[RMDB]
RNA sequence: GGGAACGACUCGAGUAGAGUCGAAAAUCUGGUUCGGGAAUGGGUAGAUUUCUGAUGUGGUUUAGUAGGUAUAUAAAUCCCGUGAGCUUCUUGCAUCUAAUUUCUCUGAUCCUGCUUACACUGAUAUUUAAAGUAGGUUUUGACAUACUCCAUCACACCAUGAUAUAUGCUUCGGCAUAUAUCAUGGAAAAGAAACAACAACAACAAC
Reactivity to DMS in 0.01 (KOAc 150mM, MgCl2 10mM, bicine 150mM(pH8.5), 24C), signal-to-noise 2, nucleotides 027 to 156: u010c040u000g020g020u000u000c090g020g060g000a100a090u000g010g000g040u010a070g010a090u000u010u010c040u020g020a130u000g020u000g040g030u000u000u000a060g030u000a020g020g020u010a060u010a110u010a070a070a150u000c010c010c020g000u030g000a080g000c040u000u000c040u000u000g000c020a110u000c050u000a080a140u000u010u000c050u000c040u000g000a070u000c020c020u010g010c040u000u010a100c080a160c100u000g020a130u000a120u000u000u010a030a040a060g030u010a080g000g050u000u000u000u010g060a060c070a060u000a030c020u000c030c010a060u000c050a100c030a210
Reactivity to 2A3 in 0.01 (KOAc 150mM, MgCl2 10mM, bicine 150mM(pH8.5), 24C), signal-to-noise 3, nucleotides 027 to 156: u050c030u050g020g040u030u100c030g020g010g010a060a090u060g040g030g030u060a050g020a160u040u160u110c050u080g050a070u060g030u020g060g000u050u040u020a010g000u010a010g040g050u010a060u010a020u030a090a130a030u050c020c010c020g040u050g040a040g000c020u070u030c010u050u120g010c010a030u000c010u070a120a070u030u090u050c050u000c010u010g020a060u040c000c010u010g020c010u030u050a010c050a030c060u070g070a070u110a180u220u140u130a100a070a030g030u020a000g000g000u020u040u040u060g000a000c000a000u080a030c030u020c060c010a070u080c020a020c010a000